RNA sequence: GGGAACGACUCGAGUAGAGUCGAAAACCUCGCCGGACUGGGUGGGUGCCAGCAGCAGCGUGACCGACAGUCGCAGCGUGUCGGGGUCACGCCCGGCCGCCUCCGACGCCUGGGUGAGAAAUCCGCGGUAUAGGGAAAAGUUCGCUUUUCCCUAUACAAAAGAAACAACAACAACAAC
Reactivity to 2A3 in 0.01 (KOAc 150mM, MgCl2 10mM, bicine 150mM(pH8.5), 24C), signal-to-noise 4, nucleotides 027 to 126: c010c000u010c010g030c020c010g030g050a070c040u100g080g000g020u120g050g010g020u060g040c040c020a040g040c060a020g020c020a000g010c060g020u010g020a020c000c020g020a020c020a020g030u110c080g030c150a030g050c060g050u090g010u040c050g040g030g010g030u090c010a000c020g020c000c010c000g040g000c000c000g040c000c010u040c020c010g100a090c040g010c010c010u170g090g030g020u050g010a030g030a010a090a020u030c020c010g030c030g090
Reactivity to DMS in 0.01 (KOAc 150mM, MgCl2 10mM, bicine 150mM(pH8.5), 24C), signal-to-noise 8, nucleotides 027 to 126: c090c010u000c060g020c030c020g020g010a090c070u000g010g000g030u000g010g000g020u000g010c060c050a110g030c120a090g020c150a120g010c020g020u010g000a050c000c010g000a050c030a070g020u000c080g030c210a080g010c050g010u000g010u000c010g020g020g010g010u000c100a050c140g000c000c060c070g020g000c020c050g000c030c020u010c050c000g000a080c110g000c050c040u000g020g010g010u000g000a080g010a060a090a100u010c030c020g010c160g010